[RMDB]
RNA sequence: GGGAACGACUCGAGUAGAGUCGAAAAUGGGAGAUCAGUACCCUGUCCUCCUGCUCUUUGCUCCGUGAGAAAGAUCCACCUACAACCUCAGGUCCUUAGACCAACCAGCCCAAGAAACAUCUCACCAAUUUCAAAUCCAGACCCCACUGGAAAUCGAAAUCCAUGAAAAUUUCGAUUUUCAUGGAUUAAAAGAAACAACAACAACAAC
Reactivity to 2A3 in 0.01 (KOAc 150mM, MgCl2 10mM, bicine 150mM(pH8.5), 24C), signal-to-noise 2, nucleotides 027 to 156: u090g010g020g010a060g010a100u130c040a030g100u150a110c020c010c030u050g000u040c000c000u020c000c010u050g020c010u010c000u140u090u100g020c020u020c030c010g060u040g050a070g090a030a070a000g050a070u000c000c010a020c010c030u080a080c060a060a070c000c020u060c040a050g000g020u010c020c010u060u090a030g010a020c000c010a040a050c000c010a010g030c000c000c000a060a020g060a080a070a010c020a020u080c030u030c050a060c020c010a060a090u020u090u070c090a130a140a070u030c010c000a000g030a090c070c000c000c000a000c000u000g000g000a030a050a020u040c000g010a060
Reactivity to DMS in 0.01 (KOAc 150mM, MgCl2 10mM, bicine 150mM(pH8.5), 24C), signal-to-noise 2, nucleotides 027 to 156: u010g020g000g020a130g010a100u000c060a110g010u010a170c050c040c000u000g090u000c020c000u000c020c000u000g020c030u000c040u000u020u000g010c000u000c040c050g040u010g000a080g030a110a090a100g000a110u010c020c000a100c030c030u010a090c030a090a100c000c010u000c040a080g010g020u000c010c090u000u010a090g010a060c050c030a060a120c050c030a070g030c010c000c010a070a080g000a160a080a080c050a040u000c030u000c030a080c040c030a090a210u010u000u000c040a080a040a130u020c000c030a040g000a120c090c040c020c060a190c030u000g000g000a000a080a130u000c030g000a100